[RMDB]
RNA sequence: GGGAACGACUCGAGUAGAGUCGAAAAAACAUCCACGCCAUGGUGACUUUCGAGGGAAUCGGUGAAGUGCCGUUCACCGCCAAUCCGCAAGACGUGGAGGCCCACGGAAGGGCCAUAUACGCUGCGAAUCUGACGUAGUUUUCGAACUACGUCAGAUAAAAGAAACAACAACAACAAC
Reactivity to DMS in 0.01 (KOAc 150mM, MgCl2 10mM, bicine 150mM(pH8.5), 24C), signal-to-noise 5, nucleotides 027 to 126: a050a050c140a110u000c010c010a090c060g020c070c060a060u000g010g020u010g000a100c040u000u000u000c050g030a100g010g020g010a150a060u010c030g010g010u000g010a040a040g000u000g040c130c100g000u000u000c010a040c010c000g030c180c090a060a090u000c050c010g010c020a080a100g020a130c060g010u010g000g020a200g000g020c000c010c000a120c190g010g000a100a060g000g000g020c000c010a020u000a130u010a030c080g020c050u010g010c060g000a120
Reactivity to 2A3 in 0.01 (KOAc 150mM, MgCl2 10mM, bicine 150mM(pH8.5), 24C), signal-to-noise 3, nucleotides 027 to 126: a000a000c060a040u020c010c010a020c040g010c030c020a050u060g010g000u070g070a180c020u050u120u100c060g040a090g050g030g000a080a080u110c030g000g020u030g040a080a010g060u070g250c050c020g090u010u030c040a030c030c010g000c010c000a040a040u050c030c000g020c040a080a110g110a160c030g020u010g000g030a030g000g020c010c030c000a010c040g100g060a140a160g010g000g020c010c010a000u020a000u000a020c010g000c010u020g020c030g040a040